[RMDB]
RNA sequence: GGGAACGACUCGAGUAGAGUCGAAAAGACGACGUGUCGAAUUAUCCAAGUUGCAGCGGCUGCCCCGGACGUUGGAUACAACACGACGAAUCGUAGUAACCACGCUGCGGCUGCGGCCCCGUACGAGUGAUUAAUGCUGCUUCGGCAGCAUUAAUCAAAAAGAAACAACAACAACAAC
Reactivity to 2A3 in 0.01 (KOAc 150mM, MgCl2 10mM, bicine 150mM(pH8.5), 24C), signal-to-noise 3, nucleotides 027 to 126: g040a010c050g040a050c040g170u170g000u060c010g010a030a140u140u070a050u120c030c000a040a020g050u070u060g060c030a050g050c050g050g000c000u060g010c040c000c000c000g020g000a040c010g000u080u030g000g010a030u020a120c060a050a000c020a050c060g070a010c070g130a050a130u110c000g000u020a020g010u010a010a070c010c000a020c100g020c090u080g010c040g100g000c060u090g030c040g010g000c000c030c000c000g030u050a050c060g040a070g100
Reactivity to DMS in 0.01 (KOAc 150mM, MgCl2 10mM, bicine 150mM(pH8.5), 24C), signal-to-noise 3, nucleotides 027 to 126: g020a050c030g010a090c120g000u000g050u000c020g030a120a090u010u040a070u060c020c000a060a090g010u030u000g000c030a050g000c140g020g000c050u000g000c010c300c040c000g000g000a070c020g010u040u000g000g000a170u010a050c090a080a070c160a040c030g010a100c260g030a140a120u030c030g010u010a050g000u010a050a060c050c030a050c020g010c060u000g020c060g000g000c110u000g030c000g000g000c010c020c020c060g000u040a060c090g000a100g020